[RMDB]
RNA sequence: GGGAACGACUCGAGUAGAGUCGAAAACUAUGCAGAUUCGUCUGCAUAGAGACCCGAUGAAGCGGCACUUUCACAGCUUCAUACACGUAAGAAGUGCAAUAAAGGGACGAGGGUUCGCCCUCGUCAAAGAUUACUCGCUGUUCGCAGCGAGUAAUCUAAAAGAAACAACAACAACAAC
Reactivity to DMS in 0.01 (KOAc 150mM, MgCl2 10mM, bicine 150mM(pH8.5), 24C), signal-to-noise 1, nucleotides 027 to 126: c000u000a000u000g010c020a010g000a050u000u010c100g000u000c000u000g000c000a000u000a000g000a140g000a060c000c000c010g000a070u000g010a010a010g040c030g000g030c090a060c070u010u000u010c100a040c070a170g010c000u000u000c010a020u000a190c120a090c180g010u010a130a090g000a050a010g010u000g000c020a210a110u000a010a060a110g020g000g010a000c030g010a020g000g000g010u000u000c200g010c000c000c010u000c000g010u000c010a000a080
Reactivity to 2A3 in 0.01 (KOAc 150mM, MgCl2 10mM, bicine 150mM(pH8.5), 24C), signal-to-noise 1, nucleotides 027 to 126: c000u010a000u000g040c010a000g020a020u020u130c140g090u000c070u010g000c000a000u000a000g000a000g020a020c060c000c010g010a070u030g000a000a000g010c050g000g000c050a010c040u100u160u080c130a100c000a080g030c000u010u040c000a000u040a050c110a020c090g090u070a040a060g020a050a010g000u010g070c030a020a080u270a150a100a030g180g000g010a010c010g010a010g050g000g040u060u130c240g170c000c000c020u000c000g000u000c000a010a010